[RMDB]
RNA sequence: GGGAACGACUCGAGUAGAGUCGAAAAGAACUCGUAAAUCCACUGUUGCAACUUUUAUAGUUGCCAAUGACGAAAACUACGGCGCGGAGUACAAGCUGGCUGCGUAAGCAGUCCUCUUGACCCGUUGCUUCUGGUAGCUUCGGCUCCAGCAAUCACUGAUGUCAUUGAACUUCGGUUCAAUGACAUCAAAAGAAACAACAACAACAAC
Reactivity to 2A3 in 0.01 (KOAc 150mM, MgCl2 10mM, bicine 150mM(pH8.5), 24C), signal-to-noise 1, nucleotides 027 to 156: g020a040a010c040u020c100g010u100a020a050a100u040c090c040a040c070u110g000u040u000g010c000a010a010c010u000u050u140u210a150u300a100g000u010u010g000c010c020a010a090u100g020a000c000g010a000a050a150a100c100u120a100c120g000g010c000g000c000g010g020a100g100u010a300c010a000a000g000c010u000g000g000c000u000g000c000g010u050a160a000g010c010a000g020u060c010c000u000c000u000u000g000a010c010c000c000g000u070u300g000c000u120u000c000u000g020g040u100a020g000c000u050u000c270g130g000c000u000c000c000a000g010c050a050a140u110c060a020c130u050

The record gives the reactivity of an RNA of 207 nucleotides to 2A3. 2A3 adducts were read by reverse transcription with SuperScript II with manganese. The reactions ran in a buffer of 150 mM KOAc, 10 mM MgCl2 and 150 mM bicine (pH 8.5), at 24 C.